Chemical mapping of a 207-nucleotide RNA with 2A3. Reactivities are given for positions 27 through 156. The RNA was probed in 150 mM KOAc, 10 mM MgCl2 and 150 mM bicine (pH 8.5) at 24 C. For 2A3 the reverse transcriptase was SuperScript II with manganese.
RNA sequence: GGGAACGACUCGAGUAGAGUCGAAAAUGGGCUACCAGUAAGCGAAAAAUGAUACAGGACGAAAAAAACAUAAUUCGAGAUUUUUCAGGAUGGAUUUUUGUAGGUAUCUAUCAAAACUAUUCUGAUGCAACGUAGAGCACGUUCGCGUGCUCUACAAGAUAUGGGGUAGCUUCGGCUACCCCAUAUCAAAAGAAACAACAACAACAAC
Reactivity to 2A3 in 0.01 (KOAc 150mM, MgCl2 10mM, bicine 150mM(pH8.5), 24C), signal-to-noise 1, nucleotides 027 to 156: u060g000g010g010c020u050a090c080c000a060g030u070a030a010g030c020g070a070a020a080a020a100u060g000a050u050a150c120a060g050g000a030c040g000a000a030a000a000a000a080a110c060a020u190a100a090u090u100c010g020a010g010a130u030u000u000u200u230c010a000g010g010a010u000g000g070a100u080u000u000u000u080g000u010a010g060g060u120a050u150c020u030a030u150c030a000a010a000a020c020u020a000u020u050c000u000g000a000u090g000c020a060a030c090g000u000a000g010a000g010c000a020c000g010u010u050c060g010c000g080u000g000c010u000c000u000a000c000a000a000